[RMDB]
RNA sequence: GGGAACGACUCGAGUAGAGUCGAAAAGUGGACUUGCGCUUAAGUACUGGCCUGGGUGCUUAAGAAGAGGAUUUACAGACUAGCGUUUUAAUGAAGCCCCGACAUACGGCGUCUUAUUUCGCGAAAUUUAAGUAGUAUGAAUAUGAAUGUAGAUGUCGAUAUCACUUCACUUCGGUGAAGUGAUAUCAAAAGAAACAACAACAACAAC
Reactivity to 2A3 in 0.01 (KOAc 150mM, MgCl2 10mM, bicine 150mM(pH8.5), 24C), signal-to-noise 2, nucleotides 027 to 156: g090u100g040g010a030c030u110u280g020c070g000c050u020u000a030a000g000u010a020c020u020g030g040c010c020u020g020g000g020u000g000c000u000u000a010a000g010a030a000g040a020g060g040a040u120u140u210a060c010a000g030a010c020u010a000g000c010g020u000u030u000u080a050a040u160g020a010a010g000c000c000c030c040g020a000c000a000u070a000c010g000g020c010g000u000c000u000u020a010u000u010u020c000g000c010g040a040a030a040u210u300u120a140a000g000u000a000g010u010a020u030g010a070a040u220a120u140g080a090a040u130g020u060a080g050a160u090g030u060c100
An RNA of 207 nucleotides, treated with 2A3 and read out base by base. Reactivities are given for positions 27 through 156. It was measured as part of the RMDB library RSTRND. 2A3 adducts were read by reverse transcription with SuperScript II with manganese.